[RMDB]
RNA sequence: GGGAACGACUCGAGUAGAGUCGAAAAGAUGGGUCCGAUGGAUUAAUGCGUCGCCAGCCAUUGGAUCCUGAUUGAUAGAUUGACGGCGACGGUCGGAUCACUCGGUAAUUCGGUGCUCCACGAGUGAUCCGUGAUGAUAGUUAAGACGAGCACCUAAACCACGGAGUAAUUUCGAUUACUCCGUGGUAAAAGAAACAACAACAACAAC
Reactivity to 2A3 in 0.01 (KOAc 150mM, MgCl2 10mM, bicine 150mM(pH8.5), 24C), signal-to-noise 1, nucleotides 027 to 156: g100a020u090g010g020g030u040c000c010g000a000u000g000g040a040u110u120a250a000u300g090c000g000u000c000g000c000c000a000g000c010c000a000u000u070g000g000a000u000c000c010u000g000a000u000u180g000a000u040a250g160a100u070u240g160a030c040g000g000c000g000a000c020g000g000u000c020g000g000a000u000c000a000c000u000c010g020g040u100a190a100u230u060c040g010g000u000g000c040u000c000c000a000c000g000a000g010u000g000a000u000c000c000g000u000g020a010u040g020a020u070a120g160u230u210a060a000g040a060c070g000a000g000c000a000c000c030u010a010a010